The record gives the reactivity of an RNA of 177 nucleotides to 2A3 and DMS. For 2A3 the reverse transcriptase was SuperScript II with manganese. The data come from the RNA Mapping Database (RMDB), library OK2TST. The 2A3 profile rests on 1,495 reads.

RNA sequence: GGGAACGACUCGAGUAGAGUCGAAAAAACGACAUCCGCAUUGUCCACUUCAAAGUCAGCCAGCUUAAUGAUUUCAGUUAUCUUGGUAUCGUUUACGUUAAGCAUAUAGCGAACACUACGGAGCACAACCGAUUCACGAAUUCGUUCGUGAAUCGGUAAAAGAAACAACAACAACAAC
Reactivity to 2A3 in 0.01 (KOAc 150mM, MgCl2 10mM, bicine 150mM(pH8.5), 24C), signal-to-noise 1, nucleotides 027 to 126: a000a000c080g030a020c010a050u030c040c010g030c020a030u040u080g030u000c010c000a050c060u020u050c070a070a030a070g040u010c020a020g010c010c010a010g020c000u070u040a050a010u080g110a090u010u120u060c010a020g040u050u090a030u050c020u060u160g070g030u020a060u060c030g030u030u010u090a090c070g050u020u000a030a040g000c060a030u080a020u100a150g020c000g040a030a010c010a000c030u140a020c060g030g000a030g050c030a020c020a110
Reactivity to DMS in 0.01 (KOAc 150mM, MgCl2 10mM, bicine 150mM(pH8.5), 24C), signal-to-noise 2, nucleotides 027 to 126: a030a050c060g010a080c030a060u000c050c020g000c070a040u010u010g020u000c010c050a070c070u000u000c080a100a080a050g000u000c120a100g000c040c030a110g040c020u010u000a040a020u000g020a190u000u000u030c050a090g010u000u020a050u000c080u020u050g020g000u010a010u000c060g000u010u000u000a100c060g020u000u000a070a070g010c020a030u000a100u000a070g000c050g010a050a050c070a010c050u000a050c060g010g000a080g000c100a100c130a090